[RMDB]
RNA sequence: GGGAACGACUCGAGUAGAGUCGAAAAGUAUUACUUAGUAACAUGGGCUAACUCAUCUAUAGAAAUGCUUAUGUCAGUGUUUUCACAUGAAGAUUAUUUAAUAGCAAAAGAGUUAAUAAUAUUAUCAAAACUGAUAGGAUUUCGAUCCUAUCAGUUUAAAAGAAACAACAACAACAAC
Reactivity to DMS in 0.01 (KOAc 150mM, MgCl2 10mM, bicine 150mM(pH8.5), 24C), signal-to-noise 1, nucleotides 027 to 126: g000u000a010u000u020a120c050u020u000a080g020u010a100a130c100a040u000g000g030g020c040u030a090a050c040u000c030a080u010c110u010a070u000a060g000a070a090a050u000g010c050u010u000a050u000g050u010c120a040g000u010g010u000u000u000u000c030a080c070a020u000g000a070a040g010a090u000u000a060u030u000u000a020a070u000a030g000c020a100a100a080a240g000a120g010u000u000a030a040u020a000a080u000a300u010u020a090u000c010a080
This 177-nucleotide RNA was probed chemically with DMS. Source: RMDB library OK2TRN, as collected in RNAgym. For DMS the reverse transcriptase was MarathonRT. The RNA was probed in 150 mM KOAc, 10 mM MgCl2 and 150 mM bicine (pH 8.5) at 24 C.